[RMDB]
RNA sequence: GGGAACGACUCGAGUAGAGUCGAAAACAACGAAAGGGAGCACUUUGUAGCCAGCGUGUGCCAACAUCUCAAGGACUUUAAGUGCUUUCAGGAUGUCACGUUGAGGAAUAACCUGCUUAUCCUUCGAAGCGAGCCCGAUAUUCGUAUCGGGCUCGCUAAAAGAAACAACAACAACAAC
Reactivity to 2A3 in 0.01 (KOAc 150mM, MgCl2 10mM, bicine 150mM(pH8.5), 24C), signal-to-noise 1, nucleotides 027 to 126: c110a000a080c110g140a270a070a000g000g000g020a100g040c090a000c000u080u150u300g090u170a080g020c010c000a000g000c000g000u000g020u090g160c070c100a040a000c000a080u000c020u010c070a000a040g010g000a000c000u070u140u230a130a120g000u050g010c000u030u030u000c000a000g090g000a000u000g000u000c000a000c090g000u000u050g110a050g050g020a000a000u120a000a000c000c000u060g020c010u050u120a180u140c000c070u000u000c030g010a000